[RMDB]
RNA sequence: GGGAACGACUCGAGUAGAGUCGAAAACAGUUAACACCAACAUGGUUGAUUUAAAUGACUACUUACAGCACAUAUUAAAGUCAACCAAUAUGAAAUGCCUGACUCCAGAAAAGGCCCUUUCUGGUUAAAUUGGCAUUAAGUUCGCUUAAUGCCAAUUAAAAGAAACAACAACAACAAC
Reactivity to 2A3 in 0.01 (KOAc 150mM, MgCl2 10mM, bicine 150mM(pH8.5), 24C), signal-to-noise 3, nucleotides 027 to 126: c020a030g020u070u120a070a030c040a050c080c050a040a020c040a110u040g000g000u010u000g010a000u020u010u100a030a070a020u030g020a030c010u100a030c040u200u210a070c110a090g080c140a020c020a210u210a180u070u150a110a030a000g040u000c000a000a000c000c000a000a010u140a020u020g060a080a080a050u050g020c020c010u020g060a070c040u010c030c000a000g010a020a050a030a080g130g020c010c010c030u000u010u020c000u000g000g060u010u030a110
Reactivity to DMS in 0.01 (KOAc 150mM, MgCl2 10mM, bicine 150mM(pH8.5), 24C), signal-to-noise 5, nucleotides 027 to 126: c090a050g000u010u000a120a110c090a080c090c070a070a100c190a100u010g020g020u000u000g010a020u000u000u000a070a050a060u000g010a300c020u010a080c210u000u020a100c210a030g030c070a090c010a030u000a080u000u000a030a010a010g010u000c000a000a010c000c000a040a110u000a060u010g000a050a090a090u010g010c100c020u010g000a130c100u000c020c020a020g000a030a020a050a100g010g010c050c060c040u000u000u000c010u000g000g000u000u000a020